[RMDB]
RNA sequence: GGGAACGACUCGAGUAGAGUCGAAAAAGGCUUAUCCCGGGGAAUUCGGCGAAUCGUCCCCACAUAGCAGAUCCCAGGACCCCCUUCCAAAAUGACCGAGGGGGGAGCUUGGGAGCGCGGGGGACCACAUUAUCUUACUGUUCGCAGUAAGAUAAUGAAAAGAAACAACAACAACAAC
Reactivity to 2A3 in 0.01 (KOAc 150mM, MgCl2 10mM, bicine 150mM(pH8.5), 24C), signal-to-noise 2, nucleotides 027 to 126: a000g070g030c060u090u050a060u080c000c000c000g010g000g000g000a150a140u210u140c080g090g010c070g120a100a090u090c020g020u030c010c000c040c000a050c030a080u230a020g040c040a040g040a290u000c000c020c000a000g000g000a060c010c020c020c030c030u040u000c050c000a050a210a110a270u120g050a050c000c050g000a010g000g010g010g000g010g000a010g040c000u000u000g000g000g000a000g000c020g010c020g000g000g000g000g000a010c010c000a050
Reactivity to DMS in 0.01 (KOAc 150mM, MgCl2 10mM, bicine 150mM(pH8.5), 24C), signal-to-noise 4, nucleotides 027 to 126: a090g010g000c080u000u020a110u000c010c010c010g020g030g000g000a110a120u000u000c040g000g010c060g000a050a080u000c110g010u000c000c000c000c020a110c180a120u010a090g050c030a100g030a120u000c000c010c000a010g010g000a160c010c000c000c000c000u000u000c010c050a050a080a130a100u010g010a090c290c220g000a020g000g000g000g000g010g000a000g000c010u000u000g000g000g000a000g000c100g020c040g000g000g000g000g000a060c060c140a110